[RMDB]
RNA sequence: GGGAACGACUCGAGUAGAGUCGAAAACUGUAUUUGGCUAGAGCUAACAAAAACUCGCAGCGUGAAAUUGCCGUGUUUGAAGGGGAAUACGUUAAGUGCCCUAAGAACAGGAAGAUCUGUGGAGCAAUAUCCUCAGAUUAUUCGUAAUCUGAGGAUAAAAAGAAACAACAACAACAAC
Reactivity to 2A3 in 0.01 (KOAc 150mM, MgCl2 10mM, bicine 150mM(pH8.5), 24C), signal-to-noise 7, nucleotides 027 to 126: c030u050g050u220a210u090u110u100g040g000c030u050a050g030a070g160c010u070a060a080c050a070a130a040a030a020c010u010c020g000c020a010g010c050g100u140g130a070a080a120u170u160g060c020c010g150u050g040u050u020u010g070a100a080g030g010g010g030a080a150u150a160c010g030u070u190a180a050g010u020g050c000c000c000u020a010a030g010a010a000c000a000g000g020a050a030g030a070u030c010u030g030u060g110g010a010g010c020a040a070
Reactivity to DMS in 0.01 (KOAc 150mM, MgCl2 10mM, bicine 150mM(pH8.5), 24C), signal-to-noise 9, nucleotides 027 to 126: c050u000g030u000a080u010u000u000g020g020c020u000a120g010a120g020c040u000a060a100c170a090a070a090a110a120c030u000c020g010c040a020g010c150g020u010g010a050a080a110u010u010g020c050c010g010u010g020u000u000u000g010a200a140g010g000g010g000a060a070u000a020c030g010u010u010a100a150g020u000g000c010c010c000u010a030a300g010a010a000c010a130g000g000a060a090g010a090u000c020u000g010u000g020g010a050g010c110a070a110
Source: RMDB library OK2TRN, as collected in RNAgym. This 177-nucleotide RNA was probed chemically with 2A3 and DMS. DMS adducts were read by reverse transcription with MarathonRT. High 2A3 reactivity points to a flexible backbone, as in loops and unpaired stretches. For 2A3 the reverse transcriptase was SuperScript II with manganese.